[RMDB]
An RNA of 177 nucleotides, treated with DMS and 2A3 and read out base by base.
RNA sequence: GGGAACGACUCGAGUAGAGUCGAAAAGAUAUGGACUGAGCUUUUGACGUUCGAUAUUCGGAAACGAAUAUACCGAACGAUAAGCUCGUCCUAAGUCAAAAGACUGUUAUGUUCGCAUAACAGUCAACAUUGCCUGCUUGUUCGCAAGCAGGCAAUGAAAAGAAACAACAACAACAAC
Reactivity to DMS in 0.01 (KOAc 150mM, MgCl2 10mM, bicine 150mM(pH8.5), 24C), signal-to-noise 2, nucleotides 027 to 126: g000a080u000a300u010g000g000a000c000u010g010a000g010c000u000u020u020u000g020a120c050g000u000u000c000g000a030u000a000u010u000c020g000g000a130a130a180c020g000a000a010u000a010u000a100c300c020g040a010a010c000g020a100u010a000a000g000c000u000c000g000u010c010c000u000a000a050g000u000c030a130a110a200a150g000a000c020u010g010u000u000a000u010g000u000u010c260g000c000a000u000a000a000c000a010g000u000c010a020a130
Reactivity to 2A3 in 0.01 (KOAc 150mM, MgCl2 10mM, bicine 150mM(pH8.5), 24C), signal-to-noise 1, nucleotides 027 to 126: g010a020u080a010u060g000g000a020c090u200g000a100g020c030u240u080u160u140g230a170c100g000u000u000c020g020a010u010a010u000u010c000g000g000a030a050a050c010g010a000a000u030a000u030a220c090c070g000a030a010c010g010a000u010a010a000g000c020u000c000g010u000c010c000u000a070a030g040u000c000a110a040a000a120g000a020c010u010g000u000u000a000u020g090u030u050c300g060c100a000u000a010a000c000a000g000u000c000a000a000
Description: Values are in units of 0.01, from 0 to 300, in steps of 10.